Structure probing data (DMS) for a 177-nucleotide construct. The reactions ran in a buffer of 150 mM KOAc, 10 mM MgCl2 and 150 mM bicine (pH 8.5), at 24 C.
[RMDB]
RNA sequence: GGGAACGACUCGAGUAGAGUCGAAAAUCGUGCCCGUUCGCGGGCACGAGUCACCUACACCGCUUCCAGUCUGGGCCACUUCCUCUCUAUGAGAUCUCAGUAUAUUUGGUCAGUUCGCUGACCAAAAGAAUAGGCUCACUUUCGAGUGAGCCUAUUCAAAAGAAACAACAACAACAAC
Reactivity to DMS in 0.01 (KOAc 150mM, MgCl2 10mM, bicine 150mM(pH8.5), 24C), signal-to-noise 1, nucleotides 027 to 126: u000c010g030u000g020c010c000c000g040u020u020c120g040c010g090g000g010c020a000c000g010a000g000u010c100a120c010c010u000a070c070a160c090c050g000c040u000u000c070c050a110g000u000c040u000g000g000g000c080c030a030c090u000u000c000c020u000c010u000c050u000a110u030g000a100g010a090u000c040u000c010a130g000u020a180u000a100u000u000u000g000g000u000c000a000g020u000u000c250g030c000u000g000a010c000c000a000a000a020a090

The DMS profile rests on 987 reads.